Conditions: 150 mM KOAc, 10 mM MgCl2 and 150 mM bicine (pH 8.5), 24 C. The record gives the reactivity of an RNA of 177 nucleotides to DMS and 2A3. Reactivities are given for positions 27 through 126. For DMS, 1,003 sequencing reads were counted. Source: RMDB library M2PK90, as collected in RNAgym.
RNA sequence: GGGAACGACUCGAGUAGAGUCGAAAACAUCAGGAGGACCUUCCGCGCACUUCCAAGCAGGAGCUUUCCUUCCAAGCGCACUUCCAAUCUACUCGAGAGGUGGAGGAGGAGGAGGAUUCCCACAAAAAUCAAUUUUAACGUUCGCGUUAAAAUUGAUAAAAGAAACAACAACAACAAC
Reactivity to DMS in 0.01 (KOAc 150mM, MgCl2 10mM, bicine 150mM(pH8.5), 24C), signal-to-noise 2, nucleotides 027 to 126: c040a050u030c130a110g020g020a040g010g000a090c300c020u010u000c060c070g010c100g020c050a080c120u000u000c090c110a090a090g000c050a140g000g010a040g000c070u030u020u020c000c010u000u020c010c030a110a170g020c130g010c110a120c080u020u000c040c040a160a090u050c010u000a020c020u000c020g000a050g000a060g000g010u000g010g000a050g000g010a100g020g030a100g000g000a130g000g000a150u000u000c000c000c000a160c170a030a050a070a030
Reactivity to 2A3 in 0.01 (KOAc 150mM, MgCl2 10mM, bicine 150mM(pH8.5), 24C), signal-to-noise 1, nucleotides 027 to 126: c030a080u160c070a020g030g000a020g000g020a030c000c000u040u020c020c040g070c040g030c070a070c090u250u100c070c030a060a030g010c030a030g040g000a010g000c050u060u090u100c000c010u120u020c010c000a050a030g070c030g050c050a020c050u000u000c020c010a010a100u000c000u040a000c000u010c030g060a050g000a070g060g050u070g000g020a050g000g050a030g030g010a010g010g010a010g050g000a070u040u040c000c030c000a010c050a030a140a030a000